[RMDB]
RNA sequence: GGGAACGACUCGAGUAGAGUCGAAAAUCAUCAAGAAGUAGGCUUAGGCCAAUUGCUUGGUGGUGAAAGUAGAGGGAAGGUAGCACUUCGACGCCUCUAAGUACGCUGUGGGAGUAGUGCUUAAAUAAAAAGCACAGCGACUUCGGUCGCUGUGCAAUCAUUAUAGGCGGUUCGCCGCCUAUAAUGAAAAAGAAACAACAACAACAAC
Reactivity to 2A3 in 0.01 (KOAc 150mM, MgCl2 10mM, bicine 150mM(pH8.5), 24C), signal-to-noise 3, nucleotides 027 to 156: u010c000a000u010c010a000a010g020a100a010g040u100a020g010g000c020u130u150a080g170g020c020c020a050a100u060u030g000c000u010u000g000g000u000g000g000u010g040a090a050a020g050u080a020g000a040g030g050g020a090a010g040g030u090a020g050c030a020c070u040u030c090g070a050c040g100c020c000u030c040u040a060a050g020u020a020c050g000c090u060g020u090g040g030g030a060g030u100a030g010u020g000c030u040u060a040a070a020u120a030a140a040a010a000g040c000a000c000a000g000c000g010a010c020u030u080c220g070g020u000c020g000c000u000g010u000g000c010a000a000
Reactivity to DMS in 0.01 (KOAc 150mM, MgCl2 10mM, bicine 150mM(pH8.5), 24C), signal-to-noise 2, nucleotides 027 to 156: u000c030a020u000c040a070a040g010a030a090g000u000a110g040g000c030u000u000a150g060g030c000c000a030a090u000u010g010c000u010u000g100g060u010g000g020u010g020a090a100a140g060u000a020g000a080g030g020g000a050a070g010g030u000a060g060c110a100c010u000u000c030g000a100c030g050c020c000u020c020u000a090a170g010u000a030c060g030c020u000g010u000g000g000g000a130g000u000a060g000u000g020c000u000u000a030a070a140u010a090a080a050a110a130g010c060a030c010a010g030c000g030a050c000u000u000c270g020g000u000c020g130c010u000g030u000g040c030a010a000